Annotation
An RNA of 207 nucleotides, treated with 2A3 and read out base by base. The 2A3 profile rests on 1,621 reads. The data come from the RNA Mapping Database (RMDB), library RNAMAK.
RNA sequence: GGGAACGACUCGAGUAGAGUCGAAAAGGGGUCCGUCCGAUGAAAUUAGCUGGAGUCGGUACUGAAGCCUCCACGGUACACGACGUUGAAAGCUAAUGGAGGACGGACGGAGGCACCCAAACACGGCUGAGACAUCUUCGGAUGUCUCAGCCGUGAACUUCAGAUUUGUAUUCGUACAAAUCUGAAGAAAAGAAACAACAACAACAAC
Reactivity to 2A3 in 0.01 (KOAc 150mM, MgCl2 10mM, bicine 150mM(pH8.5), 24C), signal-to-noise 1, nucleotides 027 to 156: g040g010g110g020u030c000c000g000u000c000c000g120a190u020g000a000a000a000u010u000a000g000c010u000g000g000a010g000u000c010g010g010u000a000c010u020g050a110a030g000c010c000u000c000c000a010c000g000g050u070a020c300a080c080g010a000c020g180u280u080g000a000a000a000g000c000u050a000a050u000g000g010a000g000g010a000c000g000g000a000c000g010g020a000g000g000c000a010c000c020c010a010a070a010c000a000c000g030g030c040u000g030a000g000a020c030a030u000c010u060u080c270g090g000a000u000g000u000c000u030c000a000g010c000c030g010u000g020a030a020